[RMDB]
RNA sequence: GGGAACGACUCGAGUAGAGUCGAAAACAUUCGCGAUUUCAGGAGUCACUUAACGGACAGCGUGACAAUCGUUCGUGACGAAGGUGUACCGCGAAUUCAAGCACUUGCCACAUUGCUUUCGUCGAGGCCUCCAGGCACCUUUCGAGGUGCCUGGAGGAAAAGAAACAACAACAACAAC
Reactivity to 2A3 in 0.01 (KOAc 150mM, MgCl2 10mM, bicine 150mM(pH8.5), 24C), signal-to-noise 1, nucleotides 027 to 126: c000a000u010u010c000g000c000g050a000u000u040u250c000a000g060g020a110g070u000c000a000c000u060u010a040a040c000g050g090a050c070a110g010c040g100u090g110a140c060a030a140u020c040g000u020u000c080g020u060g040a000c000g000a000a010g100g000u010g030u070a150c040c080g000c000g000a000a020u060u090c110a030a000g030c010a020c060u020u110g010c000c000a180c070a100u050u120g000c030u000u000u040c040g040u000c000g090a160g040g040
Conditions: 150 mM KOAc, 10 mM MgCl2 and 150 mM bicine (pH 8.5), 24 C. Structure probing data (2A3) for a 177-nucleotide construct. For 2A3, 549 sequencing reads were counted.